[RMDB]
RNA sequence: GGGAACGACUCGAGUAGAGUCGAAAAAAGACUCAAUUAAAUAUAAAUGCAAACGAUGAAAACUUUGCUGGUGGGGAAGCUAUCGCUGCCUAAUAAGCACUUUAGUUAAACCAUCACUGUGUACUGGCCAAUAAACCCAGUAUCCCGUUCGACCGAGGAACUAACCAAAGUUCGCUUUGGUUAGUUCAAAAGAAACAACAACAACAAC
Reactivity to 2A3 in 0.01 (KOAc 150mM, MgCl2 10mM, bicine 150mM(pH8.5), 24C), signal-to-noise 1, nucleotides 027 to 156: a020a000g060a020c040u050c050a000a150u200u280a300a220a020u300a070u120a100a090a000u130g070c020a000a050a050c050g030a030u080g050a030a010a000a150c020u050u090u050g000c020u010g020g050u000g010g000g010g010a030a030g000c000u000a000u010c010g120c200u010g000c000c010u010a040a030u290a180a010g000c000a000c010u000u020u010a010g030u140u040a120a000a010c000c000a000u030c000a000c010u000g000u000g000u030a000c000u000g000g030c010c040a150a100u090a110a080a040c000c000c000a000g000u000a030u030c020c010c000g000u040u080c050g060a120c100c000g000a030g200